Chemical mapping of a 177-nucleotide RNA with 2A3. It was measured as part of the RMDB library OK1LIB.
RNA sequence: GGGAACGACUCGAGUAGAGUCGAAAAGGCGACCAAAUUGACCGAAUGACGUGGAGUCAAUUAUAUUCUCGCGUCACCGCCGUGUCUGCGUAUCUAAUAAGUUAUGGCCGGCAUGCUGACCGACGAACCGACCCUACGUUUUCGAACGUAGGGUCGGAAAAGAAACAACAACAACAAC
Reactivity to 2A3 in 0.01 (KOAc 150mM, MgCl2 10mM, bicine 150mM(pH8.5), 24C), signal-to-noise 2, nucleotides 027 to 126: g060g000c020g010a070c080c070a140a140a010u180u060g080a080c000c010g080a050a080u230g000a030c020g010u180g120g000a050g030u020c000a000a060u300u180a060u080a050u140u010c010u000c000g010c060g000u000c010a030c000c050g080c010c040g030u000g010u000c010u020g070c060g000u050a060u000c070u070a100a120u210a300a100g060u120u030a020u050g190g000c000c000g000g010c000a030u010g070c000u000g030a010c000c030g020a000c060g020a080a000
For 2A3 the reverse transcriptase was SuperScript II with manganese.